RNA sequence: GGGAACGACUCGAGUAGAGUCGAAAAUUUGGUACUGCAGACAGAUUUUGAUUUCCACAGUUGAGCUGGAAACAAACUGUGCCUUCAAAAAAUGACUUUUCUAACUUAAGGUUGGUUAUAUGUUAAGUGUGCUACUAACUUAAAAAAUAGUGGCUGAACUAGUAAAUCGAUUCGUCGAUUUACUAGUAAAAGAAACAACAACAACAAC
Reactivity to 2A3 in 0.01 (KOAc 150mM, MgCl2 10mM, bicine 150mM(pH8.5), 24C), signal-to-noise 3, nucleotides 027 to 156: u060u020u070g020g000u060a050c060u070g070c010a060g060a090c020a020g070a100u010u100u000u010g140a180u030u030u000c020c010a030c040a050g190u180u190g130a050g030c090u010g010g020a010a020a000c000a030a000a000c010u000g000u010g030c010c000u070u110c090a040a060a050a030a050a100u100g060a060c000u050u070u090u060c070u090a120a070c010u080u130a110a100g090g000u040u030g000g020u040u040a200u050a060u200g020u080u060a070a040g040u040g020u020g030c000u000a010c000u010a030a060c020u090u190a080a170a050a000a000a030u050a020g000u010g020g020c010u020g020a020
Reactivity to DMS in 0.01 (KOAc 150mM, MgCl2 10mM, bicine 150mM(pH8.5), 24C), signal-to-noise 2, nucleotides 027 to 156: u000u000u000g020g040u010a060c070u000g010c090a120g010a060c040a120g010a180u000u000u000u000g010a150u000u000u000c020c010a080c050a150g020u010u010g000a150g010c050u000g000g030a090a030a090c040a040a020a030c020u010g020u000g000c250c060u000u020c030a000a020a050a100a100a160u010g000a100c070u000u010u020u010c070u000a050a110c080u000u000a050a060g010g030u000u000g000g000u000u000a090u020a050u000g030u000u000a030a100g000u010g050u000g030c000u000a030c010u000a030a070c060u010u040a010a060a100a140a040a090u000a050g030u000g020g020c000u000g000a110